[RMDB]
RNA sequence: GGGAACGACUCGAGUAGAGUCGAAAACAAUAGAGGCAGUUCAAUAUCUUAAACAAGAUCCUCGGGAGUCAGUCUUCCAGAUGCUUUUCCUAUGAUCAAGCCCCAAAAGCCACUGAUAACUCAUAGCCAUCAAUGCUUGAUUCGUCAAGCAUUGAUGAAAAGAAACAACAACAACAAC
Reactivity to DMS in 0.01 (KOAc 150mM, MgCl2 10mM, bicine 150mM(pH8.5), 24C), signal-to-noise 4, nucleotides 027 to 126: c080a120a100u010a060g020a050g010g010c100a070g010u010u010c090a080a100u000a070u000c030u000u010a070a090a110c130a070a070g010a050u000c040c040u000c090g000g000g010a050g000u000c110a090g000u000c050u000u000c020c040a090g000a050u000g000c030u000u000u000u000c020c040u000a060u000g000a070u000c060a040a100g010c030c020c010c100a040a050a070a110g000c020c040a040c070u000g000a060u000a050a110c090u010c060a080u020a100g010c200
Reactivity to 2A3 in 0.01 (KOAc 150mM, MgCl2 10mM, bicine 150mM(pH8.5), 24C), signal-to-noise 3, nucleotides 027 to 126: c040a010a080u110a180g040a030g040g000c030a000g030u100u100c020a100a040u060a070u120c040u050u210a190a160a060c050a080a050g020a090u050c000c020u020c000g000g020g010a010g030u060c070a040g040u000c020u050u000c010c000a040g020a110u080g030c010u030u030u010u040c000c000u030a060u070g020a020u080c040a020a040g010c000c000c000c050a020a130a000a050g040c020c010a020c020u050g040a050u060a120a040c010u010c050a050u060a050g030c000
Structure probing data (DMS and 2A3) for a 177-nucleotide construct.
The 2A3 profile rests on 3,572 reads.
Conditions: 150 mM KOAc, 10 mM MgCl2 and 150 mM bicine (pH 8.5), 24 C.
For 2A3 the reverse transcriptase was SuperScript II with manganese.